[RMDB]
RNA sequence: GGGAACGACUCGAGUAGAGUCGAAAAGACAAGUGCGCGCAACGAUUCCGCUUCCGACGCACAUAUGUCCAUGGCACGCAGGAAGCGAAUCCGGGACUCUCAACCCCCAUCGGGAGACCCGGAGCCCAUCCGAUCAAUCUUUCGAGAUUGAUCGGAUAAAAGAAACAACAACAACAAC
Reactivity to 2A3 in 0.01 (KOAc 150mM, MgCl2 10mM, bicine 150mM(pH8.5), 24C), signal-to-noise 6, nucleotides 027 to 126: g050a010c050a080a050g030u030g020c010g010c020g000c050a080a070c070g090a100u200u060c080c020g010c010u010u000c010c030g070a120c040g040c040a030c020a050u130a060u070g070u010c050c040a080u080g060g000c070a020c120g020c040a060g000g030a020a000g000c000g020a000a000u000c000c000g010g000g040a070c000u000c000u030c000a060a250c000c020c020c010c010a050u130c100g020g000g010a010g010a050c000c000c000g000g000a000g000c000c010c000
Reactivity to DMS in 0.01 (KOAc 150mM, MgCl2 10mM, bicine 150mM(pH8.5), 24C), signal-to-noise 3, nucleotides 027 to 126: g020a110c090a070a070g050u010g020c050g000c070g000c150a050a090c130g000a140u000u020c130c060g020c000u000u000c020c030g010a160c080g010c030a000c040a020u010a080u000g040u020c040c140a050u000g000g000c040a040c080g050c110a150g010g000a040a050g000c020g000a070a070u000c000c010g000g010g000a150c010u020c010u000c020a080a120c030c010c030c020c040a120u010c150g000g020g000a000g000a070c020c000c000g010g000a020g010c020c030c030
An RNA of 177 nucleotides, treated with 2A3 and DMS and read out base by base. 2A3 adducts were read by reverse transcription with SuperScript II with manganese. For DMS the reverse transcriptase was MarathonRT. The RNA was probed in 150 mM KOAc, 10 mM MgCl2 and 150 mM bicine (pH 8.5) at 24 C. Values are in units of 0.01, from 0 to 300, in steps of 10.